Chemical mapping of a 207-nucleotide RNA with 2A3. For 2A3, 1,396 sequencing reads were counted. Reactivities are given for positions 27 through 156.

[RMDB]
RNA sequence: GGGAACGACUCGAGUAGAGUCGAAAAGGGGUCUUUGCGCUCCCUUGGAUUUACAUCGCUUUUGACGAUCUGAAGCCUCCACGGAUCGAUAAGCGAUGUUGUCAGGGAGCUAAAGACGGAGGCACCCAAAAGGAAUCAGUCUUCGGACUGAUUCCAAGACACAGUUGUUCUUCGGAACAACUGUGUCAAAAGAAACAACAACAACAAC
Reactivity to 2A3 in 0.01 (KOAc 150mM, MgCl2 10mM, bicine 150mM(pH8.5), 24C), signal-to-noise 2, nucleotides 027 to 156: g020g020g030g000u000c010u000u020u040g130c100g000c030u020c000c000c020u050u130g180g000a030u270u150u190a000c000a000u000c000g010c010u120u100u100u260g230a100c030g000a000u000c000u000g070a150a060g040c040c030u000c020c010a060c000g000g000a010u000c000g080a070u090a100a010g020c000g000a000u010g000u000u040g020u010c080a050g000g010g000a000g000c000u010a000a000a000g030a000c010g000g010a020g000g010c010a080c040c010c010a040a120a010a070g020g000a000a000u030c000a000g020u010c020u030u180c300g030g010a000c000u000g010a000u000u030c000c000a010a000